Overview
An RNA of 177 nucleotides, treated with DMS and 2A3 and read out base by base. The data come from the RNA Mapping Database (RMDB), library OK2TRN. 2A3 adducts were read by reverse transcription with SuperScript II with manganese. The DMS profile rests on 812 reads. For DMS the reverse transcriptase was MarathonRT.
RNA sequence: GGGAACGACUCGAGUAGAGUCGAAAAGGCCAAACAGAUGGCCGCAGCUCUCGGACGAGCGAACGGUUUGGCAGCUGCAGGAACCUUCACUGGACCCCACCCGUCGUUGUCGCAGGGGAGUGCGACGGACCCCGACAAAGUUCGCUUUGUCGGGGUCAAAAGAAACAACAACAACAAC
Reactivity to DMS in 0.01 (KOAc 150mM, MgCl2 10mM, bicine 150mM(pH8.5), 24C), signal-to-noise 1, nucleotides 027 to 126: g000g010c030c010a050a100a180c230a080g010a140u000g000g040c050c000g010c110a070g000c000u000c000u010c110g040g020a070c080g000a060g000c020g010a070a030c020g000g000u000u000u000g010g010c150a040g000c000u020g000c000a070g000g010a160a140c020c020u010u010c060a030c070u000g020g020a160c030c030c000c020a100c070c030c010g010u010c060g000u010u020g020u000c000g000c020a000g020g010g000g000a070g030u000g010c020g020a010c060g000
Reactivity to 2A3 in 0.01 (KOAc 150mM, MgCl2 10mM, bicine 150mM(pH8.5), 24C), signal-to-noise 1, nucleotides 027 to 126: g020g000c000c000a000a210a080c050a100g210a130u100g020g010c000c010g050c000a010g000c000u000c020u070c050g050g060a060c030g050a100g000c090g050a090a030c050g050g090u000u030u040g080g000c020a030g000c000u030g050c050a120g110g000a130a210c010c000u070u030c010a020c070u040g110g150a220c000c000c000c010a060c000c040c030g060u090c010g070u080u160g020u000c020g080c030a110g070g090g000g070a060g210u020g040c020g020a000c000g000